[RMDB]
RNA sequence: GGGAACGACUCGAGUAGAGUCGAAAAACCUUGUACGUAAUGAAGGAUAUAUGGUAGGUAUGGAUAACGAUACGCGCAAGCUGACUGUACAGGGACCAUUCGAACUUAAGGCUAAGAAAUUCCUUCACUCAGCAACGGUAUUCGUACCGUUGCUGAGAAAAGAAACAACAACAACAAC
Reactivity to DMS in 0.01 (KOAc 150mM, MgCl2 10mM, bicine 150mM(pH8.5), 24C), signal-to-noise 2, nucleotides 027 to 126: a120c030c040u000u000g000u020a030c040g000u000a090a100u020g000a030a040g010g000a050u000a050u030a020u020g000g000u000a100g000g000u010a050u000g010g030a100u050a120a130c090g000a130u000a040c100g000c070g010c090a130a050g010c020u000g030a080c130u000g020u000a020c000a030g000g000g020a200c070c050a140u070u000c210g040a070a110c120u000u000a030a040g000g000c020u030a070a090g000a020a090a120u000u010c010c000u000u000c040a160
Reactivity to 2A3 in 0.01 (KOAc 150mM, MgCl2 10mM, bicine 150mM(pH8.5), 24C), signal-to-noise 1, nucleotides 027 to 126: a000c010c000u000u040g090u010a060c060g030u060a050a050u180g020a070a000g030g000a010u040a000u000a020u110g120g040u040a110g040g030u000a010u130g020g050a090u010a200a020c070g010a040u030a070c110g040c000g000c150a060a000g000c060u070g070a080c060u100g010u010a000c010a010g040g020g110a010c010c000a060u190u190c090g080a060a070c020u100u120a100a010g040g000c040u010a130a070g050a100a070a090u020u040c000c000u000u000c010a030

This 177-nucleotide RNA was probed chemically with DMS and 2A3. The RNA was probed in 150 mM KOAc, 10 mM MgCl2 and 150 mM bicine (pH 8.5) at 24 C. For 2A3, 914 sequencing reads were counted. For DMS the reverse transcriptase was MarathonRT. For DMS, 989 sequencing reads were counted. Reactivities are given for positions 27 through 126. For 2A3 the reverse transcriptase was SuperScript II with manganese.